[RMDB]
The data come from the RNA Mapping Database (RMDB), library TTRDEL. This 177-nucleotide RNA was probed chemically with DMS and 2A3. For 2A3, 13,512 sequencing reads were counted. DMS adducts were read by reverse transcription with MarathonRT. Values cover nucleotides 27 to 126. The RNA was probed in 150 mM KOAc, 10 mM MgCl2 and 150 mM bicine (pH 8.5) at 24 C. The DMS profile rests on 4,722 reads.

RNA sequence: GGGAACGACUCGAGUAGAGUCGAAAAGAUAUGGAGUCGUCACAAUGGCCAACAGCUCGGAAACGAGACAUGGCUUGUGCGACUCCUAAGUCAAACACAUACUCAACGUUCGCGUUGAGUAUGUGAAGAACUUCUAACAGUUCGCUGUUAGAAGUUCAAAAGAAACAACAACAACAAC
Reactivity to DMS in 0.01 (KOAc 150mM, MgCl2 10mM, bicine 150mM(pH8.5), 24C), signal-to-noise 4, nucleotides 027 to 126: g000a030u000a300u000g000g000a010g000u010c000g010u010c030a000c000a050a060u010g010g000c000c000a020a100c250a160g020c010u010c000g000g000a080a110a180c000g000a020g010a040c070a230u010g000g000c010u010u000g010u000g010c010g000a010c000u010c000c010u000a000a060g000u000c010a110a130a220c010a000c000a000u000a010c000u000c000a000a000c000g020u010u000c180g010c020g020u010u000g000a010g020u000a000u000g000u000g000a040a050
Reactivity to 2A3 in 0.01 (KOAc 150mM, MgCl2 10mM, bicine 150mM(pH8.5), 24C), signal-to-noise 5, nucleotides 027 to 126: g020a020u050a050u120g010g000a010g000u010c010g210u220c020a010c020a020a160u290g230g030c010c000a070a070c070a190g040c010u000c020g030g010a080a070a050c010g000a000g050a020c040a090u060g000g000c000u010u020g000u000g000c000g010a000c000u000c000c000u000a010a000g010u010c020a000a110a020c020a010c000a000u000a000c000u000c000a000a000c000g050u080u060c300g000c000g120u000u000g000a000g000u000a000u000g000u000g000a010a020